This 177-nucleotide RNA was probed chemically with DMS. Source: RMDB library TTRINS, as collected in RNAgym. Values are in units of 0.01, from 0 to 300, in steps of 10. For DMS the reverse transcriptase was MarathonRT.
RNA sequence: GGGAACGACUCGAGUAGAGUCGAAAAGAUAUGGACUCUACAGCAAUGAUGCCCACACAUUUUAUCAAGUUACUCGGAAACGAGUAACUUGAUAACCAUGUGGGUUGAGCUGUUAGAGUCCUAAGUCCUCAUACACAGGCUUCGGCCUGUGUAUGAGAAAAGAAACAACAACAACAAC
Reactivity to DMS in 0.01 (KOAc 150mM, MgCl2 10mM, bicine 150mM(pH8.5), 24C), signal-to-noise 1, nucleotides 027 to 126: g000a080u020a300u000g070g010a010c010u010c010u000a080c010a000g000c010a250a120u020g040a220u000g010c010c000c000a010c000a100c160a300u020u000u000u000a000u000c020a000a000g020u000u000a000c000u000c010g030g000a130a230a200c000g010a000g020u000a000a010c000u000u020g000a000u070a000a000c300c300a120u000g000u000g000g000g010u000u000g010a120g010c000u000g000u050u000a030g000a020g000u000c000c000u030a030a080g000u000c060